[RMDB]
This 207-nucleotide RNA was probed chemically with DMS. For DMS the reverse transcriptase was MarathonRT. Reactivities are given for positions 27 through 156. The data come from the RNA Mapping Database (RMDB), library RNAMAK.
RNA sequence: GGGAACGACUCGAGUAGAGUCGAAAAGGGGACUUCGGUCCCCCGAAUGGGGUCCGUGGGAGGGAGAUAACCAUGGAGCUGAAGCCUCCACGGCGUUGAAAUGGUCAUCUCCCUUUGAUCACGGACGGAGGCACCCGUUGACGAACUUCGGUUCGAAACACGGAUUAGUAUUCGUACUAAUCCGUGUAAAAGAAACAACAACAACAAC
Reactivity to DMS in 0.01 (KOAc 150mM, MgCl2 10mM, bicine 150mM(pH8.5), 24C), signal-to-noise 1, nucleotides 027 to 156: g010g000g030g000a000c010u010u010c280g080g000u000c000c010c000c020c000g000a050a070u000g030g020g020g040u010c000c030g050u010g030g030g020a030g040g020g010a010g000a000u000a050a020c000c000a010u030g000g000a180g000c010u040g000a080a060g020c020c000u000c020c030a300c030g000g020c010g000u000u000g010a170a240a040u000g000g010u010c020a030u000c010u000c010c000c000u000u010u010g010a120u020c020a030c000g020g020a010c030g010g010a060g040g070c040a140c010c000c040g030u000u000g010a290c040g000a010a040c020u010u020c180g050g030u000u000c010g000a140a130